Record summary: An RNA of 207 nucleotides, treated with DMS and 2A3 and read out base by base. Reactivities are given for positions 27 through 156. It was measured as part of the RMDB library M2RFPK. The DMS profile rests on 3,477 reads. For DMS the reverse transcriptase was MarathonRT. The RNA was probed in 150 mM KOAc, 10 mM MgCl2 and 150 mM bicine (pH 8.5) at 24 C.
RNA sequence: GGGAACGACUCGAGUAGAGUCGAAAACAUUGUUCUGAUCAUCUGAAGAUCAGCUAUUAGAAGAGAAAGAUCAGUUAAGUCCUUUGUACCUGAUCAGCUUGAUACAAGAACUACUGAUUUCAACUUCAAAACGGGUGCUACUUCGGUAGCACCCGAAGUAUACACUGAACUUCGGUUCAGUGUAUACAAAAGAAACAACAACAACAAC
Reactivity to DMS in 0.01 (KOAc 150mM, MgCl2 10mM, bicine 150mM(pH8.5), 24C), signal-to-noise 2, nucleotides 027 to 156: c080a170u010u000g040u000u010c000u030g000a020u000c030a130u010c130u000g010a220a290g000a040u000c010a040g030c180u010a090u010u000a170g000a060a040g000a070g000a210a150a050g000a020u000c020a000g010u000u010a070a080g010u000c010c000u000u000u000g030u000a010c010c000u010g030a190u000c100a180g030c130u000u000g010a050u010a030c020a000a020g030a020a030c000u010a070c040u000g000a010u000u010u000c000a110a260c010u000u000c020a050a070a120a150c000g010g000g040u000g000c000u000a030c000u000u000c250g030g010u000a010g000c000a000c000c000c010g000a000a010
Reactivity to 2A3 in 0.01 (KOAc 150mM, MgCl2 10mM, bicine 150mM(pH8.5), 24C), signal-to-noise 6, nucleotides 027 to 156: c040a040u130u230g060u250u070c010u000g010a000u010c010a050u010c120u230g110a180a050g000a040u010c000a000g000c000u110a120u270u180a060g010a020a010g010a010g060a050a040a020g030a020u000c000a000g010u060u180a130a000g010u030c030c000u070u140u120g010u010a010c020c030u080g070a300u210c070a030g210c020u060u030g020a040u060a020c010a000a000g000a030a000c000u060a000c000u040g010a020u020u040u040c030a070a030c000u020u010c030a030a030a040a050c010g000g000g010u000g010c000u000a010c000u030u030c170g070g000u000a000g000c000a000c000c000c000g000a000a000